[RMDB]
RNA sequence: GGGAACGACUCGAGUAGAGUCGAAAAUGCAGAAUCAUUGGGGCGACGACAGAAUCCAGAAACCGUUGAUGCAAUUGCUGCCGCUCUUGCGGGCGCAUUUGCAAGAUAGGCUGCACGGUAAAAUUGACAACGUGUCCUAAUUCGUUAGGACACGUUGAAAAGAAACAACAACAACAAC
Reactivity to 2A3 in 0.01 (KOAc 150mM, MgCl2 10mM, bicine 150mM(pH8.5), 24C), signal-to-noise 2, nucleotides 027 to 126: u060g000c010a010g050a090a100u040c030a040u070u130g030g000g010g020c040g020a030c010g010a000c020a070g100a090a060u040c010c020a030g100a070a080a010c010c020g030u040u080g050a100u070g000c000a010a020u020u020g010c030u110g020c000c000g040c010u100c050u160u240g010c000g030g060g000c000g000c010a020u020u010u000g000c000a010a020g020a040u080a030g000g050c040u020g000c010a000c020g000g010u050a010a050a110a190u150u150g030a030
Reactivity to DMS in 0.01 (KOAc 150mM, MgCl2 10mM, bicine 150mM(pH8.5), 24C), signal-to-noise 4, nucleotides 027 to 126: u010g010c050a040g010a140a090u010c070a070u000u020g020g020g010g020c030g010a070c070g010a050c110a070g010a130a100u010c040c040a130g000a120a080a100c060c020g020u010u010g010a160u010g000c020a010a010u000u000g010c000u000g040c000c000g030c020u010c240u000u000g020c010g010g020g040c120g000c020a010u000u000u010g010c030a030a080g010a090u000a060g000g000c050u000g010c050a070c060g000g000u000a040a050a060a120u010u000g000a280